This 207-nucleotide RNA was probed chemically with 2A3. The data come from the RNA Mapping Database (RMDB), library RNAMAK. The RNA was probed in 150 mM KOAc, 10 mM MgCl2 and 150 mM bicine (pH 8.5) at 24 C. Values are in units of 0.01, from 0 to 300, in steps of 10. For 2A3, 1,540 sequencing reads were counted.

RNA sequence: GGGAACGACUCGAGUAGAGUCGAAAACGCUGGGUCCAUCGGGCUUUGCGAGGUAUAGGCCUCCUGAAGCGCGCACGGGAGGCGACCUAUACUACCCACCGCAAAGUCUCUAGCGUGUGGACCUGUGCUGAAGCGCGCACGGCAACCGAAAGGUGCGGGCGCAUGAAACCUUCGGGUUUCAUGCGCCAAAAGAAACAACAACAACAAC
Reactivity to 2A3 in 0.01 (KOAc 150mM, MgCl2 10mM, bicine 150mM(pH8.5), 24C), signal-to-noise 1, nucleotides 027 to 156: c060g000c040u030g000g000g070u040c000c010a050u010c100g010g000g010c000u010u000u000g000c000g020a030g000g010u000a010u000a020g050g090c000c000u000c000c000u060g020a210a080g000c000g000c000g000c010a010c000g000g010g010a010g020g030c030g040a020c000c000u000a000u000a000c000u020a060c070c090c030a030c040c000g010c020a010a000a000g000u000c020u010c020u090a140g070c080g110u190g020u000g080g010a010c020c000u020g040u080g000c000u050g010a130a050g020c000g010c000g000c010a080c020g030g010c020a070a100c020c010g070a120a020a040g010g070u100g000c030g030